[RMDB]
RNA sequence: GGGAACGACUCGAGUAGAGUCGAAAAUGAAACCGCACAAGCUACGGCAGAGCAAGUCGCGGAUGCAGUUACUCAGCUCAACCGAGUGUUUUCGGCGAUUCAUGCCAUCAACGAGAUGAGUCAUCAAUCACGGAUUAUCAUUCGUGAUAAUCCGUGAAAAAGAAACAACAACAACAAC
Reactivity to 2A3 in 0.01 (KOAc 150mM, MgCl2 10mM, bicine 150mM(pH8.5), 24C), signal-to-noise 4, nucleotides 027 to 126: u100g020a070a020a030c030c000g050c000a030c000a030a040g010c010u140a080c080g140g000c080a030g010a000g050c020a020a060g020u060c070g000c020g030g040a010u100g010c000a000g010u040u030a030c010u020c040a020g000c010u020c020a020a020c010c040g000a020g050u070g060u060u020u040u090c050g020g000c000g010a010u070u020c030a040u150g140c020c010a070u120c030a050a120c090g050a020g010a210u050g010a010g060u020c010a030u050c010a060a100
Reactivity to DMS in 0.01 (KOAc 150mM, MgCl2 10mM, bicine 150mM(pH8.5), 24C), signal-to-noise 6, nucleotides 027 to 126: u000g000a090a090a110c020c010g010c030a050c050a070a290g010c020u010a060c090g020g000c120a100g000a070g010c020a100a250g010u000c170g010c020g010g000a050u000g020c090a110g000u000u000a050c060u000c040a050g010c020u000c030a090a080c040c020g010a030g010u000g000u000u000u000u000c030g020g010c070g000a050u010u000c050a050u000g000c030c040a090u010c140a090a100c170g000a060g000a030u000g000a050g000u000c050a080u000c090a100a110